[RMDB]
RNA sequence: GGGAACGACUCGAGUAGAGUCGAAAAGAAUGGAAAGGGAUUGUAGAGAUCAGUGUCGCAGCAUUCUCAAUUAAGGCCGGGCUUCUGAUUGUAUAUGGUUACGUGCGACAGAUACUGGUGCGAAGAAGGGAAAUAUAUACUUCGGUAUAUAUUUCCCAAAAGAAACAACAACAACAAC
Reactivity to DMS in 0.01 (KOAc 150mM, MgCl2 10mM, bicine 150mM(pH8.5), 24C), signal-to-noise 6, nucleotides 027 to 126: g010a110a050u010g020g000a030a060a050g000g020g010a100u000u010g010u010a070g010a150g000a030u010c020a050g010u010g010u000c010g010c040a060g000c060a040u000u000c060u010c030a060a080u030u030a060a090g000g010c030c090g000g020g000c040u000u000c060u010g020a040u000u010g010u010a050u020a040u010g000g000u010u010a080c150g010u010g010c010g000a020c020a080g000a120u020a060c030u000g000g010u000g010c040g010a080a100g010a130a160
Reactivity to 2A3 in 0.01 (KOAc 150mM, MgCl2 10mM, bicine 150mM(pH8.5), 24C), signal-to-noise 7, nucleotides 027 to 126: g020a020a050u090g020g050a060a030a040g050g010g020a040u030u070g070u100a060g020a010g010a100u070c050a040g040u020g030u080c020g000c030a010g060c000a050u100u000c030u000c030a050a230u100u120a070a020g030g000c020c020g070g030g060c040u070u000c020u070g060a090u030u050g020u020a030u010a020u140g170g010u120u070a060c060g030u050g010c010g020a000c020a010g010a010u080a050c030u020g030g020u050g070c060g060a080a030g060a080a110